[RMDB]
RNA sequence: GGGAACGACUCGAGUAGAGUCGAAAAACUGCGGCUGCAUGGGGGUGGCGGCGGCAGCGGCGGCCCGGGGGUAGCGGCGAGCAAAGACGUCGGGCAGGUGGCAAGGGCAUGCGUCGGGAUGGCGAGCGAGCUACACCGAAUUCGUUCGGUGUAGCUCAAAAGAAACAACAACAACAAC
Reactivity to 2A3 in 0.01 (KOAc 150mM, MgCl2 10mM, bicine 150mM(pH8.5), 24C), signal-to-noise 4, nucleotides 027 to 126: a010c050u060g010c010g140g000c010u030g010c020a170u150g020g030g000g030g060u080g040g020c040g020g010c010g030g000c040a030g010c000g070g020c020g020g000c000c020c000g000g000g010g000g010u040a060g020c020g050g000c020g000a030g000c040a070a040a060g050a040c030g040u080c020g000g020g020c020a030g020g040u060g030g000c050a080a080g030g000g000c020a030u080g030c000g030u060c000g000g050g030a040u050g030g030c010g010a010g020c030
Reactivity to DMS in 0.01 (KOAc 150mM, MgCl2 10mM, bicine 150mM(pH8.5), 24C), signal-to-noise 3, nucleotides 027 to 126: a150c030u010g000c020g010g020c020u010g000c050a110u020g020g010g000g010g000u010g000g000c060g000g020c030g010g000c080a070g000c060g010g000c040g010g000c080c040c080g030g010g030g020g010u020a080g000c030g010g020c020g030a090g010c080a050a110a110g010a090c090g000u000c050g000g000g000c080a070g060g040u000g020g010c100a050a100g000g020g000c060a070u010g010c020g010u000c090g000g020g000a060u020g000g010c070g000a060g000c250
Structure probing data (2A3 and DMS) for a 177-nucleotide construct. The 2A3 profile rests on 4,401 reads.